The record gives the reactivity of an RNA of 177 nucleotides to DMS and 2A3. The DMS profile rests on 2,438 reads. The data come from the RNA Mapping Database (RMDB), library M2PK90. Conditions: 150 mM KOAc, 10 mM MgCl2 and 150 mM bicine (pH 8.5), 24 C.
RNA sequence: GGGAACGACUCGAGUAGAGUCGAAAAUACACUUUACCUGUGCUGGUUUCAUUACUUUGUCCCAAACCAGGCACGCGUAAUUAAAGGCCAGUUUGGCCAGGUCCGCGUUAUCGAUGGUCACCAAUAACAAUCUGGCCAUAUUCGUAUGGCCAGAUUGAAAAGAAACAACAACAACAAC
Reactivity to DMS in 0.01 (KOAc 150mM, MgCl2 10mM, bicine 150mM(pH8.5), 24C), signal-to-noise 3, nucleotides 027 to 126: u010a120c100a120c110u000u000u000a010c040c030u000g020u000g020c010u010g000g000u000u000u010c140a080u000u010a040c140u010u010u010g020u000c010c010c010a090a060a030c040c030a050g010g020c060a020c010g030c280g000u000a010a020u000u010a080a080a090g020g000c010c010a050g010u000u020u010g010g020c020c050a050g000g010u010c040c030g020c050g010u000u000a090u020c050g010a090u010g010g010u000c070a090c060c050a050a090u010a110a110
Reactivity to 2A3 in 0.01 (KOAc 150mM, MgCl2 10mM, bicine 150mM(pH8.5), 24C), signal-to-noise 2, nucleotides 027 to 126: u070a000c050a010c060u060u050u040a020c000c000u030g040u050g000c020u010g010g000u050u090u090c060a090u090u140a140c080u170u170u190g080u090c000c000c000a010a010a010c010c010a040g120g000c000a010c000g010c020g000u000a040a000u020u110a300a100a000g010g000c020c000a080g150u110u200u130g030g010c000c000a010g000g040u010c010c010g070c040g040u060u060a120u120c050g040a110u070g010g000u020c030a020c070c060a070a120u120a130a030